[RMDB]
The data come from the RNA Mapping Database (RMDB), library RNAMAK.
The record gives the reactivity of an RNA of 207 nucleotides to 2A3.
2A3 adducts were read by reverse transcription with SuperScript II with manganese.
RNA sequence: GGGAACGACUCGAGUAGAGUCGAAAAGGGGUCCUCCCACAAUGGCUGUUCUCUAGCGUGGGCUUGGAUUUACUGAAGCCUCCACGGUUGUCAGCCUCGGGACAGCUGAUGGGAGGACGGAGGCACCCAAACGACGCACGCUUCGGCGUGCGUCGAACUGAAUUAAUGACUUCGGUCAUUAAUUCAGAAAAGAAACAACAACAACAAC
Reactivity to 2A3 in 0.01 (KOAc 150mM, MgCl2 10mM, bicine 150mM(pH8.5), 24C), signal-to-noise 1, nucleotides 027 to 156: g100g060g080g010u000c030c000u000c000c000c000a010c030a020a140u100g010g000c000u000g020u060u050c100u060c170u290a230g150c150g230u300g000g000g000c060u050u180g120g010a120u300u300u040a050c000u000g050a080a040g000c000c000u000c020c000a000c020g010g000u010u030g020u000c000a000g000c000c000u020c030g000g000g000a000c000a000g050c000u070g070a040u020g000g000g010a000g000g000a000c000g010g000a000g010g000c000a010c000c000c000a030a060a000c020g000a000c000g020c010a000c000g000c020u040u110c280g100g000c000g000u010g040c000g000u000c000g000a000a000